Structure probing data (2A3) for a 207-nucleotide construct. The 2A3 profile rests on 665 reads. It was measured as part of the RMDB library RNAMAK. Values are in units of 0.01, from 0 to 300, in steps of 10.
RNA sequence: GGGAACGACUCGAGUAGAGUCGAAAAGGGGUCCAUGUGGAGUCGAGGGUCAAUGGAGGCUCUGAAGCCUCCACGGAGCCUAUGAAGUUGGCGCCUAGCUCGACGCGAAACACAUGGACGGAGGCACCCAAAAGUACCAUACUUCGGUAUGGUACAAGUGAACACGUUAGUUCGCUAACGUGUUCACAAAAGAAACAACAACAACAAC
Reactivity to 2A3 in 0.01 (KOAc 150mM, MgCl2 10mM, bicine 150mM(pH8.5), 24C), signal-to-noise 1, nucleotides 027 to 156: g070g030g070g000u000c000c000a010u010g000u040g000g000a160g010u000c000g000a000g000g160g000u160c090a000a010u050g020g030a000g000g000c000u000c090u070g100a060a050g000c000c000u040c020c000a000c030g010g020a000g010c000c000u070a300u120g300a150a050g040u150u070g010g000c040g090c000c000u120a210g140c000u000c010g000a000c000g000c040g050a060a160a000c050a000c000a010u010g000g000a000c000g000g030a000g000g110c040a100c000c000c000a070a160a040a000g000u000a010c000c000a000u000a000c000u040u040c300g080g000u000a000u000g000g000u010a010c000a030a020